This 177-nucleotide RNA was probed chemically with 2A3. For 2A3 the reverse transcriptase was SuperScript II with manganese. Values cover nucleotides 27 to 126. It was measured as part of the RMDB library M2PK50.
RNA sequence: GGGAACGACUCGAGUAGAGUCGAAAACAGACCAAGUUCGCUUGGUCUGAAAGAAAGCGGAAAGCACCAGGGAGGGUAGGUGCGGGCCGCAACCACCCAUAAAAAGUACGAUCUUCGGAUCGUACAACGACGUUUGAGUGUUCGCACUCAAACGUCGAAAAGAAACAACAACAACAAC
Reactivity to 2A3 in 0.01 (KOAc 150mM, MgCl2 10mM, bicine 150mM(pH8.5), 24C), signal-to-noise 1, nucleotides 027 to 126: c010a010g010a000c000c000a010a000g000u000u030c140g010c130u010u000g000g000u000c000u010g020a000a020a010g040a020a070a010g000c010g000g000a020a040a010g000c000a010c020c010a050g000g120g040a130g060g110g030u150a100g050g020u000g010c000g000g070g000c000c010g010c000a000a000c010c020a020c000c000c000a070u260a030a100a010a000a020g000u010a000c000g000a000u000c020u040u060c200g050g000a000u000c010g020u000a000c000a000a000